Structure probing data (2A3 and DMS) for a 177-nucleotide construct. The 2A3 profile rests on 1,200 reads. Reactivities are given for positions 27 through 126. DMS adducts were read by reverse transcription with MarathonRT. The data come from the RNA Mapping Database (RMDB), library VIROID.
RNA sequence: GGGAACGACUCGAGUAGAGUCGAAAAUGAGAGAGUGGUUACCUCUCAGCCCCUCCACCUUGGGGUGCCCUAUUCGGAGCACUGCAGUUCCGAUAGAAAGGCUAAGCACUUCGCAAUGAAGUAAGGUACGUUAUUACAGCUUCGGCUGUAAUAACGUAAAAGAAACAACAACAACAAC
Reactivity to 2A3 in 0.01 (KOAc 150mM, MgCl2 10mM, bicine 150mM(pH8.5), 24C), signal-to-noise 1, nucleotides 027 to 126: u000g000a010g010a010g000a050g030u090g030g270u220u180a030c010c000u000c010u000c010a010g000c000c000c000c000u020c000c030a040c000c000u020u030g030g010g000g090u010g000c020c000c000u010a000u020u010c030g000g000a000g000c010a020c260u300g040c020a110g000u000u000c000c000g020a000u000a010g020a020a030a000g000g020c020u030a080a010g070c020a020c020u030u020c030g050c170a180a300u300g010a010a000g000u030a000a000g070g000u030
Reactivity to DMS in 0.01 (KOAc 150mM, MgCl2 10mM, bicine 150mM(pH8.5), 24C), signal-to-noise 1, nucleotides 027 to 126: u000g000a000g000a010g010a000g000u020g020g010u000u020a140c180c000u010c010u010c000a020g040c020c000c000c010u010c040c120a100c090c020u000u010g010g030g000g000u000g010c030c020c020u010a160u010u000c010g030g000a000g030c010a110c260u000g000c240a110g010u000u000c000c000g010a000u000a010g020a060a100a090g010g010c040u010a020a140g030c220a080c010u000u020c000g000c230a140a070u000g000a010a000g010u000a070a040g010g040u020
High 2A3 reactivity points to a flexible backbone, as in loops and unpaired stretches.